[RMDB]
RNA sequence: GGGAACGACUCGAGUAGAGUCGAAAAUCACAUUCGGUGAUCGUGCCGCGUAAAGGCGUGAUGGAGUUGGUCAGAUUACUGGAUGGUGGUGAUACGCCGUUGCGCCUGCAAAUUGGUAGCAACAAUAUCCACAGAGUGAGUUCGCUCACUCUGUGGAAAAAGAAACAACAACAACAAC
Reactivity to DMS in 0.01 (KOAc 150mM, MgCl2 10mM, bicine 150mM(pH8.5), 24C), signal-to-noise 2, nucleotides 027 to 126: u000c020a050c010a110u000u020c040g020g020u000g000a010u010c020g000u010g010c010c020g010c100g000u000a110a110a080g000g010c030g030u000g030a090u000g000g000a150g010u010u000g030g010u000c080a140g000a040u000u000a000c030u000g000g000a030u000g020g000u000g030g000u060g010a130u010a140c130g000c040c070g000u010u000g010c010g010c000c000u000g000c240a060a060a150u010u000g000g040u000a070g030c020a020a020c020a070a100u000a070
Reactivity to 2A3 in 0.01 (KOAc 150mM, MgCl2 10mM, bicine 150mM(pH8.5), 24C), signal-to-noise 1, nucleotides 027 to 126: u000c000a000c020a040u010u010c030g000g070u000g040a040u000c010g100u110g050c000c030g020c010g080u130a100a120a110g120g000c000g010u040g050a110u070g060g100a130g090u250u220g110g000u080c040a060g010a050u020u010a040c000u030g060g030a060u060g090g080u030g000g000u010g040a060u050a150c100g000c070c020g050u040u010g000c000g000c020c000u060g010c070a000a040a110u200u120g020g000u050a070g020c000a000a010c000a010a030u130a050